[RMDB]
RNA sequence: GGGAACGACUCGAGUAGAGUCGAAAACUCAGAUGUGUGGUCAAGGCAGCGUUCAUCCCCACAAAUACUGCCUGGCUGUGGGAUCCUCCCAUUCCAGUCCAAGCAAAACAGAAGAGCAAUGCUCACCUCAACCGUGCAGAUUCGUCUGCACGGUUGAAAAAGAAACAACAACAACAAC
Reactivity to DMS in 0.01 (KOAc 150mM, MgCl2 10mM, bicine 150mM(pH8.5), 24C), signal-to-noise 1, nucleotides 027 to 126: c010u020c000a050g030a200u030g000u000g020u010g000g030u000c030a050a100g020g060c020a000g020c020g000u000u000c100a110u020c040c080c000c050a120c250a050a070a110u000a080c040u010g050c000c000u000g000g010c080u000g040u000g020g000g000a120u000c180c220u020c050c050c000a120u000u000c050c060a090g000u020c040c030a040a090g000c170a020a080a080a100c160a090g000a060a040g000a090g050c080a110a100u000g010c030u000c000a250c210c090
Chemical mapping of a 177-nucleotide RNA with DMS.
The reactions ran in a buffer of 150 mM KOAc, 10 mM MgCl2 and 150 mM bicine (pH 8.5), at 24 C.
Reactivities are given for positions 27 through 126.
The DMS profile rests on 545 reads.